An RNA of 177 nucleotides, treated with DMS and 2A3 and read out base by base.
RNA sequence: GGGAACGACUCGAGUAGAGUCGAAAAUGAUUGAGCGUAGCACACACUCAGACUGUACGACAGUCUGACACACACCUACGCUACUGCAUCGUGUGUGUGAUAUCGAUGUAGCACGAAAAUGAAGUAACUGUAAGGGUAAAUUCGUUUACCCUUACAGAAAAGAAACAACAACAACAAC
Reactivity to DMS in 0.01 (KOAc 150mM, MgCl2 10mM, bicine 150mM(pH8.5), 24C), signal-to-noise 9, nucleotides 027 to 126: u000g010a140u010u000g000a130g010c010g010u000a020g010c040a030c040a060c040a150c240u000c010a010g010a010c000u000g010u000a150c290g010a140c010a010g010u000c000u000g000a010c060a050c160a090c210a100c120c010u000a010c020g010c030u010a050c030u000g000c020a020u000c010g010u000g000u010g020u000g000u000g010a110u000a050u010c020g000a020u000g010u000a020g020c140a080c140g000a040a050a060a080u010g000a090a100g010u010a080a150
Reactivity to 2A3 in 0.01 (KOAc 150mM, MgCl2 10mM, bicine 150mM(pH8.5), 24C), signal-to-noise 9, nucleotides 027 to 126: u260g040a110u130u220g070a030g060c010g010u000a000g000c080a010c000a000c000a010c040u000c010a000g000a010c010u020g030u150a140c130g130a050c250a000g000u000c000u000g010a000c000a000c000a000c000a010c030c000u010a000c010g000c030u040a060c020u010g000c000a010u010c010g010u010g000u010g010u010g020u040g100a100u050a020u210c020g000a010u010g010u010a010g020c050a030c120g110a120a040a010a070u220g070a110a030g070u070a120a040
DMS adducts were read by reverse transcription with MarathonRT. Reactivities are given for positions 27 through 126. The RNA was probed in 150 mM KOAc, 10 mM MgCl2 and 150 mM bicine (pH 8.5) at 24 C.